Structure probing data (2A3 and DMS) for a 177-nucleotide construct.
RNA sequence: GGGAACGACUCGAGUAGAGUCGAAAAAAACGCCAUAAAACGUACAUGCGCAUCGAUCAAUGCGUGAGAUUGAGAUUCUCCCCCCACUUGAUGGUUGAGAUGUUCAAGACUCAGCACCAUCAGCUGAUACCUAGCAGUGAUUCGUCACUGCUAGGUAAAAAGAAACAACAACAACAAC
Reactivity to 2A3 in 0.01 (KOAc 150mM, MgCl2 10mM, bicine 150mM(pH8.5), 24C), signal-to-noise 2, nucleotides 027 to 126: a000a000a000c110g000c090c010a170u240a040a180a000a000c030g040u070a000c040a080u170g000c020g000c000a020u050c080g170a070u150c070a080a010u050g020c000g000u060g050a020g020a070u150u300g060a070g050a150u170u000c030u050c090c000c000c010c010c000a010c020u000u040g000a000u000g010g000u020u060g010a000g030a000u100g050u250u240c050a040a000g000a050c010u000c020a020g010c040a030c000c000a000u000c000a000g000c030u020g010a030
Reactivity to DMS in 0.01 (KOAc 150mM, MgCl2 10mM, bicine 150mM(pH8.5), 24C), signal-to-noise 4, nucleotides 027 to 126: a040a050a030c090g010c020c040a150u020a070a070a090a070c090g000u000a080c130a090u000g000c020g010c010a000u000c110g010a090u010c110a150a050u000g000c000g020u000g000a110g000a080u000u000g020a110g000a190u010u000c020u010c000c000c010c020c000c010a100c130u000u000g010a000u000g010g040u000u000g010a060g000a070u000g030u000u000c290a140a120g000a040c040u000c010a030g000c200a060c010c000a010u000c010a030g000c180u000g010a240
Background:
The reactions ran in a buffer of 150 mM KOAc, 10 mM MgCl2 and 150 mM bicine (pH 8.5), at 24 C. High DMS reactivity at an A or C suggests that its Watson-Crick edge is free.